Background
Structure probing data (DMS and 2A3) for a 207-nucleotide construct. The reactions ran in a buffer of 150 mM KOAc, 10 mM MgCl2 and 150 mM bicine (pH 8.5), at 24 C. It was measured as part of the RMDB library PDB130.

RNA sequence: GGGAACGACUCGAGUAGAGUCGAAAAAAUAGACUAUUUCUCAGUAAUAUUCAUUCCCGUAGCACUAUUCGUCACAUGAUCAAUUAUAGAAUUCUCCAUAUGAUACAUACACUCAGACCCCUUCAUCAACCGAUUCUUUAAAUACCUACUACUAUUCGCUAGUUAGUAGGUUCGCCUACUAACUAGCAAAAGAAACAACAACAACAAC
Reactivity to DMS in 0.01 (KOAc 150mM, MgCl2 10mM, bicine 150mM(pH8.5), 24C), signal-to-noise 1, nucleotides 027 to 156: a080a140u000a060g010a090c020u010a100u000u000u000c000u000c040a080g000u010a100a100u000a080u000u010c070a080u000u000c020c010c020g000u030a030g020c060a110c020u010a090u000u000c060g020u010c010a070c030a020u000g010a060u000c030a110a090u000u010a160u010a130g010a070a100u000u000c010u000c040c010a100u000a050u000g030a160u010a070c030a050u000a090c060a060c090u010c040a090g030a170c060c020c020c030u000u000c060a030u010c040a040a070c040c020g020a110u010u000c040u040u020u000a040a050a100u000a100c020c050u000a000c070u000a120c060u000a140u000u010c100
Reactivity to 2A3 in 0.01 (KOAc 150mM, MgCl2 10mM, bicine 150mM(pH8.5), 24C), signal-to-noise 2, nucleotides 027 to 156: a000a000u130a030g020a010c020u010a060u040u180u020c050u020c060a020g070u060a060a090u010a070u080u090c020a000u020u010c000c000c060g030u050a010g000c020a000c060u070a070u060u080c020g050u060c030a020c000a160u110g040a050u050c110a050a070u110u110a040u090a170g140a090a050u150u080c030u020c030c010a010u040a050u160g040a010u030a090c010a010u070a020c030a010c070u030c010a020g070a160c000c000c000c030u010u050c010a110u010c010a010a040c030c010g060a050u080u040c000u030u060u060a050a140a030u050a030c010c010u030a020c000u070a040c000u000a130u010u100c030
For 2A3 the reverse transcriptase was SuperScript II with manganese. High DMS reactivity at an A or C suggests that its Watson-Crick edge is free. The DMS profile rests on 1,673 reads.